About this RNA
Structure probing data (DMS and 2A3) for a 177-nucleotide construct.
[RMDB]
RNA sequence: GGGAACGACUCGAGUAGAGUCGAAAAAGACCUGAAGUCUAGGCAACGUACGGGAGACGUAGUUCUUCAAUCACAUGACGCCUAGGGGAAAGUCCCCGGAUCUCGGGUAGAAAGUGCCGUGCGCUACCACUGUUAUGAGGUUCGCCUCAUAACAGUGAAAAGAAACAACAACAACAAC
Reactivity to DMS in 0.01 (KOAc 150mM, MgCl2 10mM, bicine 150mM(pH8.5), 24C), signal-to-noise 3, nucleotides 027 to 126: a110g010a110c020c020u020g010a090a140g010u000c010u020a030g010g010c010a130a260c060g020u010a060c300g000g000g000a020g020a030c030g020u010a100g040u000u000c010u000u010c040a130a100u010c110a100c050a060u000g000a070c300g020c020c010u010a030g000g000g000g010a120a120a090g000u010c010c030c010c030g010g000a090u000c060u000c070g000g010g010u000a060g010a080a080a040g010u010g010c050c030g010u000g010c010g010c080u000a100c160
Reactivity to 2A3 in 0.01 (KOAc 150mM, MgCl2 10mM, bicine 150mM(pH8.5), 24C), signal-to-noise 3, nucleotides 027 to 126: a000g060a020c010c010u040g100a060a010g070u000c020u040a020g020g000c020a040a030c080g060u040a020c040g060g010g010a020g020a000c060g170u120a060g040u130u000c010u020u000c020a050a240u110c060a010c030a130u110g070a060c080g010c020c010u040a030g000g010g010g050a060a170a000g110u020c010c010c010c000g080g000a130u070c080u030c120g010g050g000u020a050g120a040a120a020g080u060g020c030c040g030u060g020c040g000c020u070a050c010
For DMS, 2,167 sequencing reads were counted.
As a SHAPE reagent, 2A3 marks flexible, mostly unpaired nucleotides at the ribose 2'-OH.
Conditions: 150 mM KOAc, 10 mM MgCl2 and 150 mM bicine (pH 8.5), 24 C.
For 2A3, 2,275 sequencing reads were counted.
For 2A3 the reverse transcriptase was SuperScript II with manganese.
DMS adducts were read by reverse transcription with MarathonRT.